[RMDB]
RNA sequence: GGGAACGACUCGAGUAGAGUCGAAAAGCGUCCACAUCGUGAACGAAUAUUCUGUUAAACAUGAUGGGUAUUUUGCUGGUGGACAUUUCGAACGGAGCGGCGGCUUUGUGUCGCUCCACGUACACUAAUUCGUUUAGUUCAUCCUGUGAGCCGUGUCAUUGAUAUGUCCGUUCGCGGACAUAUCAAUAAAAGAAACAACAACAACAAC
Reactivity to 2A3 in 0.01 (KOAc 150mM, MgCl2 10mM, bicine 150mM(pH8.5), 24C), signal-to-noise 6, nucleotides 027 to 156: g110c040g020u000c010c010a040c000a070u200c070g070u060g110a080a060c070g020a040a020u060a060u170u170c060u080g060u100u170a150a290a120c110a110u260g000a060u080g050g000g020u030a040u010u100u050u160g070c050u060g020g010u000g000g020a000c010a030u040u050u060c040g010a050a010c080g000g010a010g020c000g020g000c010g070g050c070u150u170u220g180u090g010u030c000g010c000u000c010c000a000c010g010u030a010c060a020c010u060a080a070u070u040c020g030u050u030u060a050g010u020u040c020a070u130c030c020u050g050u060g080a030g030c050c030g040u060g060u090c030
Reactivity to DMS in 0.01 (KOAc 150mM, MgCl2 10mM, bicine 150mM(pH8.5), 24C), signal-to-noise 2, nucleotides 027 to 156: g020c060g010u000c010c010a040c040a100u010c090g020u000g020a060a040c050g020a070a050u000a050u000u020c050u010g020u000u000a100a090a290c160a110u000g010a060u000g010g020g050u000a030u000u000u000u000g030c030u020g020g030u010g020g010a040c050a220u030u000u000c050g040a050a090c090g010g010a090g010c060g010g020c010g030g000c150u040u000u030g030u000g050u000c000g010c000u010c010c000a000c050g010u010a110c190a170c070u000a050a100u000u000c080g020u000u000u000a090g000u000u000c040a070u000c010c030u000g000u000g010a070g040c040c030g010u000g020u000c070